Structure probing data (2A3) for a 207-nucleotide construct. The RNA was probed in 150 mM KOAc, 10 mM MgCl2 and 150 mM bicine (pH 8.5) at 24 C. The 2A3 profile rests on 389 reads.
RNA sequence: GGGAACGACUCGAGUAGAGUCGAAAAAUCUGCAAAUCAUGUGUCAUAUGAUUAGUUUGACUGCACUUCCUUGGUGGUGUGGUGACGGCCAAAAACUUACACCCCGUGUUUGGGGUGUCACGACAGACUGUGCCUGGUGCCUAACGCCCAUGGAGGAAUUUGCGGAUUAGUUCGCUAAUCCGCAAAUAAAAGAAACAACAACAACAAC
Reactivity to 2A3 in 0.01 (KOAc 150mM, MgCl2 10mM, bicine 150mM(pH8.5), 24C), signal-to-noise 1, nucleotides 027 to 156: a000u040c020u090g050c030a100a100a010u030c040a020u090g110u060g140u160c060a180u090a010u200g140a160u190u070a050g120u100u100u100g110a060c010u010g020c010a020c010u000u040c030c000u000u020g070g010u060g070g030u050g010u050g020g030u050g100a010c020g000g000c030c020a140a000a000a140a000c070u070u050a030c000a000c000c000c000c000g090u180g150u140u260u300g000g000g000g000u000g000u000c020a030c100g190a000c050a060g080a020c050u050g010u060g090c000c000u070g050g060u180g000c000c000u010a020a020c010g100c040c000c020a000u020g030g030a000g010g000a040